[RMDB]
RNA sequence: GGGAACGACUCGAGUAGAGUCGAAAAGGAACAAGGGAUGACUGUCGACGAGAAAGCAACAGAAAUGGUGGAGGAGGGACUAUUAUCGGGGAGGGAACUGAUAGCACUCAAGGAGGCAAUUCCUCUCCAUAUACAAAGCCUUCGGGCUUUGUAUAUGAAAAGAAACAACAACAACAAC
Reactivity to 2A3 in 0.01 (KOAc 150mM, MgCl2 10mM, bicine 150mM(pH8.5), 24C), signal-to-noise 4, nucleotides 027 to 126: g080g010a030a110c040a060a080g050g000g010a050u080g050a060c040u030g020u090c040g040a120c030g010a020g130a160a080a020g040c000a010a040c010a030g090a030a110a010u130g060g040u070g020g030a110g050g050a160g010g010g000a010c040u060a060u250u060a100u190c050g000g000g010g040a180g000g010g010a040a000c010u020g030a050u080a070g060c050a040c080u050c020a010a050g070g000a020g000g000c020a020a040u070u020c010c000u030c010u000c020
Reactivity to DMS in 0.01 (KOAc 150mM, MgCl2 10mM, bicine 150mM(pH8.5), 24C), signal-to-noise 4, nucleotides 027 to 126: g000g000a170a120c120a110a120g020g000g000a130u010g010a210c040u000g010u010c050g020a100c090g000a150g000a100a110a100g000c050a070a050c050a060g010a080a070a080u000g010g010u000g000g000a100g010g010a120g020g000g010a090c130u000a050u000u000a080u000c120g020g010g010g000a070g000g000g020a100a080c130u000g010a080u000a030g000c170a050c080u020c090a070a070g010g010a060g000g000c050a040a100u000u000c010c000u010c050u010c050